[RMDB]
An RNA of 207 nucleotides, treated with 2A3 and DMS and read out base by base. Reactivities are given for positions 27 through 156. The reactions ran in a buffer of 150 mM KOAc, 10 mM MgCl2 and 150 mM bicine (pH 8.5), at 24 C. It was measured as part of the RMDB library OK3TST. For DMS, 3,327 sequencing reads were counted.

RNA sequence: GGGAACGACUCGAGUAGAGUCGAAAAGUCACGAGGAGACUCGUGACAGCAUGCUUCGGCAUGCAAGGGUCGGCAUGGCAUCUCCACCUCCUCGCGGUCCGACCUGGGCAUCCGAAGGAGGACGCACGUCCACUCGGAUGUUCAAUGGAGAGCCAAACAAAAUGCAUAGUUUCGACUAUGCAUUUUGAAAAGAAACAACAACAACAAC
Reactivity to 2A3 in 0.01 (KOAc 150mM, MgCl2 10mM, bicine 150mM(pH8.5), 24C), signal-to-noise 3, nucleotides 027 to 156: g010u000c000a000c000g010a010g020g030a070g020a050c000u000c000g010u000g000a000c010a000g000c000a000u010g000c010u070u040c240g150g000c000a000u000g000c020a030a070g030g010g000u000c000g000g020c100a160u090g010g000c010a180u020c010u000c010c000a010c010c010u060c010c020u080c050g030c070g020g000u010c000c000g000a010c000c020u010g000g000g000c000a000u000c010c020g030a100a080g040g030a200g020g000a030c030g110c120a130c230g020u000c000c000a010c010u010c000g000g000a000u000g010u000u010c000a000a010u060g000g000a010g000a000g010c010c000a020a030a000
Reactivity to DMS in 0.01 (KOAc 150mM, MgCl2 10mM, bicine 150mM(pH8.5), 24C), signal-to-noise 2, nucleotides 027 to 156: g050u000c000a000c010g030a030g020g010a300g010a210c000u010c000g000u010g000a010c070a060g000c010a020u000g030c020u000u010c300g030g000c010a010u010g030c010a070a060g050g040g000u010c020g070g000c140a160u000g000g060c040a150u000c000u000c010c000a150c080c060u000c010c010u000c020g040c120g000g000u000c030c020g030a070c070c000u020g000g010g000c000a050u000c020c010g000a090a160g020g000a200g100g020a050c000g020c240a160c110g020u000c000c000a090c040u000c020g000g030a030u000g030u000u000c020a040a040u000g030g000a150g000a260g000c000c000a060a110a300